The record gives the reactivity of an RNA of 177 nucleotides to DMS and 2A3. The reactions ran in a buffer of 150 mM KOAc, 10 mM MgCl2 and 150 mM bicine (pH 8.5), at 24 C. Source: RMDB library OK2TRN, as collected in RNAgym. For 2A3 the reverse transcriptase was SuperScript II with manganese. For DMS, 8,814 sequencing reads were counted.
RNA sequence: GGGAACGACUCGAGUAGAGUCGAAAAGUGAGGUAACGGCCCACCAAGCCUGCGAUCGGUAGCCGGACUGAGAGGUUGUACGGCCACAUUGGGACUGAGACACGGCCCAGACUCCUACGGGAGGCAGGGAUCAAUCGUUAUUCGUAACGAUUGAUCCAAAAGAAACAACAACAACAAC
Reactivity to DMS in 0.01 (KOAc 150mM, MgCl2 10mM, bicine 150mM(pH8.5), 24C), signal-to-noise 7, nucleotides 027 to 126: g020u000g000a070g010g010u010a070a120c140g010g000c020c020c020a110c090c080a110a150g000c020c010u000g010c060g010a060u000c060g010g000u000a060g020c030c040g010g010a060c060u000g010a130g010a100g000g000u000u010g010u010a090c100g010g000c030c060a030c080a130u010u010g020g000g000a060c040u010g010a150g000a090c090a090c090g000g000c010c000c020a120g010a060c020u000c010c000u000a100c180g020g010g010a020g010g000c110a100g010
Reactivity to 2A3 in 0.01 (KOAc 150mM, MgCl2 10mM, bicine 150mM(pH8.5), 24C), signal-to-noise 4, nucleotides 027 to 126: g040u030g030a060g080g010u060a110a060c050g090g010c030c020c010a030c030c030a040a010g040c000c030u070g020c030g060a110u110c040g050g040u050a030g050c020c020g030g020a030c020u050g020a030g030a060g140g030u060u060g040u090a050c060g010g000c010c000a030c010a040u050u090g060g000g030a100c020u050g030a020g020a080c040a030c110g040g000c000c020c000a030g030a060c020u030c000c010u030a060c140g050g010g000a010g040g000c040a040g080